An RNA of 177 nucleotides, treated with 2A3 and DMS and read out base by base. For DMS the reverse transcriptase was MarathonRT. 2A3 adducts were read by reverse transcription with SuperScript II with manganese. Reactivities are given for positions 27 through 126.
[RMDB]
RNA sequence: GGGAACGACUCGAGUAGAGUCGAAAAUCUAUGAUGAACGACACCAAGAGUUGGCUGAUAGCGACAUGAAAAGGACACGAACAGACACCGAAAGGAAAGCAGGUAGGGCAUGCAGACGCUUGUAGAAUACGUCAAUACAUUUCGAUGUAUUGACGUAAAAAGAAACAACAACAACAAC
Reactivity to 2A3 in 0.01 (KOAc 150mM, MgCl2 10mM, bicine 150mM(pH8.5), 24C), signal-to-noise 7, nucleotides 027 to 126: u030c020u040a130u120g050a060u070g050a140a030c040g050a020c040a010c040c030a050a020g020a020g080u060u060g040g000c020u030g020a030u040a050g040c020g060a030c030a070u130g060a040a060a030a050g040g010a030c020a010c080g060a090a010c030a040g070a030c020a020c040c030g050a090a030a010g060g020a080a050a000g040c040a000g020g050u080a030g030g030g000c020a010u060g010c010a000g030a060c030g020c040u040u060g040u060a020g030a070a050
Reactivity to DMS in 0.01 (KOAc 150mM, MgCl2 10mM, bicine 150mM(pH8.5), 24C), signal-to-noise 9, nucleotides 027 to 126: u020c020u000a070u020g020a070u020g020a090a100c070g010a080c080a090c040c030a070a090g010a100g010u000u010g000g010c040u000g010a090u020a070g010c040g000a050c070a050u010g010a040a050a050a090g000g000a060c080a060c060g000a070a080c100a060g010a110c100a080c030c030g000a060a060a100g000g000a060a070a080g010c060a040g000g010u000a060g010g000g000c040a040u000g000c040a050g010a080c090g010c050u000u000g010u010a060g000a080a120
It was measured as part of the RMDB libraries RFM100 and RFMREP.